[RMDB]
RNA sequence: GGGAACGACUCGAGUAGAGUCGAAAAGCGUACUACUCAUCGAGGUGGCUAUGAAGAACGCUCCCCACCUGCUCCCAAAUAGGAGCAGAGGCGUUUGGAGCCACCGAGAUGAGUAUCGCAAAACCGACUUUCAACGGUUCGCCGUUGAAAGUCGGAAGGGAAUGAUAGAGUUCGCUCUAUCAUUCCCAAAAGAAACAACAACAACAAC
Reactivity to 2A3 in 0.01 (KOAc 150mM, MgCl2 10mM, bicine 150mM(pH8.5), 24C), signal-to-noise 2, nucleotides 027 to 156: g000c000g040u100a060c020u000a000c000u040c000a010u000c000g000a020g020g010u010g000g000c010u040a290u300g060a000a040g000a010a010c000g010c000u100c020c000c000c000a050c010c000u000g010c000u030c000c040c010a090a280a170u300a100g000g000a000g010c000a000g000a000g000g000c000g000u010u020u020g000g050a010g000c000c000a000c010c000g000a000g010a000u000g000a000g000u000a010u030c010g000c000a020a110a030a030c010c000g020a000c060u000u020u000c010a000a000c000g000g050u040u050c270g040c130c000g000u000u000g000a010a030a000g000u000c000g000g000a040a030